[RMDB]
RNA sequence: GGGAACGACUCGAGUAGAGUCGAAAAGGUCAAUGAUGAGUUGGCAUGUAUUCUGAAUCUAAAGUUGAUUAUUACUACUUUAGCUCUAGAAUUACUCUGAGACCUGAAACCCUGGCUUCGGCCAGGGGUCGGAUAUUAACUUCGGUUAAUAUCCGACAAAAGAAACAACAACAACAAC
Reactivity to DMS in 0.01 (KOAc 150mM, MgCl2 10mM, bicine 150mM(pH8.5), 24C), signal-to-noise 3, nucleotides 027 to 126: g010g000u010c000a100a180u020g000a190u010g000a030g010u010u000g020g020c220a080u000g010u010a050u000u000c000u000g000a040a040u010c000u000a000a010a010g000u000u000g000a120u010u020a150u010u020a100c030u000a030c000u000u000u000a010g000c240u000c020u010a000g010a020a010u000u000a040c010u000c020u000g000a160g010a020c000c000u000g000a080a060a230c010c000c000u000g000g010c010u000u010c290g020g010c000c000a000g010g000g000
Reactivity to 2A3 in 0.01 (KOAc 150mM, MgCl2 10mM, bicine 150mM(pH8.5), 24C), signal-to-noise 3, nucleotides 027 to 126: g010g000u010c030a020a210u140g030a030u100g010a040g030u080u130g170g100c170a090u150g070u060a030u010u000c000u010g050a050a060u020c000u010a020a020a000g030u020u040g110a100u070u300a080u160u180a250c010u010a010c000u000u010u000a000g000c000u010c020u050a000g010a040a010u030u030a030c000u010c010u020g030a030g000a020c010c000u010g000a070a020a020c010c010c010u000g000g000c010u080u020c300g110g000c020c000a000g030g010g000